[RMDB]
The data come from the RNA Mapping Database (RMDB), library OK2TRN.
An RNA of 177 nucleotides, treated with DMS and 2A3 and read out base by base.
For DMS, 1,071 sequencing reads were counted.
Conditions: 150 mM KOAc, 10 mM MgCl2 and 150 mM bicine (pH 8.5), 24 C.

RNA sequence: GGGAACGACUCGAGUAGAGUCGAAAACCAUGAGUACAUCUCAUGCGCGGUACAGAUGGAUCAUCUAGUGUCAUGAUGAUCAUAUGCUAGACAUGCAGUACGCGCUAGGCAUCUAGCACAUGAGUCAGGCCUAUGGUUCAUUCGUGAACCAUAGGCCAAAAGAAACAACAACAACAAC
Reactivity to DMS in 0.01 (KOAc 150mM, MgCl2 10mM, bicine 150mM(pH8.5), 24C), signal-to-noise 1, nucleotides 027 to 126: c070c010a070u000g000a020g020u010a150c220a110u000c010u000c050a120u000g020c010g030c030g000g000u000a110c140a060g000a070u010g010g010a150u000c040a000u000c150u030a110g000u010g030u000c180a090u000g010a010u000g000a130u000c010a030u000a040u000g010c000u010a000g000a050c170a100u000g000c100a050g000u010a050c050g000c100g000c000u000a050g010g000c000a080u000c000u000a040g000c000a020c130a020u000g000a110g030u020c060a050
Reactivity to 2A3 in 0.01 (KOAc 150mM, MgCl2 10mM, bicine 150mM(pH8.5), 24C), signal-to-noise 2, nucleotides 027 to 126: c040c000a030u030g010a010g030u180a080c020a130u040c040u010c000a020u040g030c040g000c020g030g020u050a020c030a020g050a030u060g090g040a030u040c000a010u000c050u060a050g170u080g090u300c040a100u060g010a000u000g020a000u000c000a000u020a030u030g000c030u000a000g000a050c050a070u040g000c040a030g010u070a010c040g000c060g020c040u020a050g090g030c000a040u050c040u020a010g100c010a010c000a020u100g020a020g010u060c040a050